[RMDB]
RNA sequence: GGGAACGACUCGAGUAGAGUCGAAAAAUCUGCUGAUAUCAAUUGUUUGAAUCUAACAUCCUUAUACAAUGUUUCAAUCUCAUUAGCAAUGUUUUCCUCAAUCAUAGUCAUGACAUUGUAUUUAUCCUCCAUUUCCUUAUAUCUAUUGCUAAACAACAUCAAUUAGAGCCUUCGGGCUCUAAUUGAUAAAAGAAACAACAACAACAAC
Reactivity to 2A3 in 0.01 (KOAc 150mM, MgCl2 10mM, bicine 150mM(pH8.5), 24C), signal-to-noise 1, nucleotides 027 to 156: a000u060c010u070g000c030u020g020a000u040a000u120c030a020a090u040u040g020u090u070u090g030a070a040u030c010u060a020a050c010a070u050c010c010u080u100a020u040a000c020a020a030u040g030u080u070u060c060a060a070u040c020u030c120a050u040u050a000g010c010a050a050u030g100u000u060u010u070c000c000u030c000a030a030u080c050a060u040a070g020u040c030a040u060g000a000c000a010u020u020g000u020a080u030u090u070a090u020c010c000u020c000c010a050u020u040u020c000c040u080u080a020u020a040u100c050u080a040u050u040g000c070u090a020a000a020c020a000a010c000